Description: The record gives the reactivity of an RNA of 207 nucleotides to 2A3 and DMS. The reactions ran in a buffer of 150 mM KOAc, 10 mM MgCl2 and 150 mM bicine (pH 8.5), at 24 C.
RNA sequence: GGGAACGACUCGAGUAGAGUCGAAAAAACUCAGCUAGGGAGAGUAUAACAUUCAUGUUGACGAGACCUAGACGAAACACAGAGGAAAAUUAUUAAUCACGGGAUAGUAUUAGUAAUGACUCUGUGUAAAACUCUUCUACGUUCGCGUAGAAGAGAACUUUUUUACCUAGUUCGCUAGGUAAAAAAGAAAAGAAACAACAACAACAAC
Reactivity to 2A3 in 0.01 (KOAc 150mM, MgCl2 10mM, bicine 150mM(pH8.5), 24C), signal-to-noise 4, nucleotides 027 to 156: a000a000c010u020c010a000g000c000u000a000g000g010g010a030g010a050g050u100a150u090a300a010c060a040u120u250c070a080u270g020u030u040g040a060c040g010a030g040a060c000c020u010a020g020a050c030g000a010a080a000c010a000c000a000g010a010g020g060a100a140a050a010u000u000a000u010u010a000a010u030c100a010c090g090g050g090a080u200a160g020u060a020u000u010a000g010u010a000a000u010g020a020c000u010c000u000g000u000g010u000a000a000a000a000c000u000c000u010u020c000u000a010c000g040u000u060c180g000c010g090u000a000g000a000a000g000a000g000a000a000
Reactivity to DMS in 0.01 (KOAc 150mM, MgCl2 10mM, bicine 150mM(pH8.5), 24C), signal-to-noise 2, nucleotides 027 to 156: a120a040c050u000c000a090g040c040u000a020g000g000g000a190g020a210g010u010a100u010a030a050c010a110u000u010c130a100u000g020u000u010g000a110c020g010a300g000a060c000c000u000a030g000a250c130g010a140a130a040c000a010c000a010g010a030g030g010a130a070a080a090u000u000a010u010u000a010a010u000c080a140c010g030g010g000a150u010a110g020u000a030u000u000a000g000u010a000a020u000g000a190c000u000c000u010g030u000g000u000a010a010a020a060c000u000c000u000u000c000u000a000c000g000u000u000c300g020c030g040u000a000g000a030a000g000a020g000a010a050

For 2A3, 2,563 sequencing reads were counted. Source: RMDB library M2RFPK, as collected in RNAgym.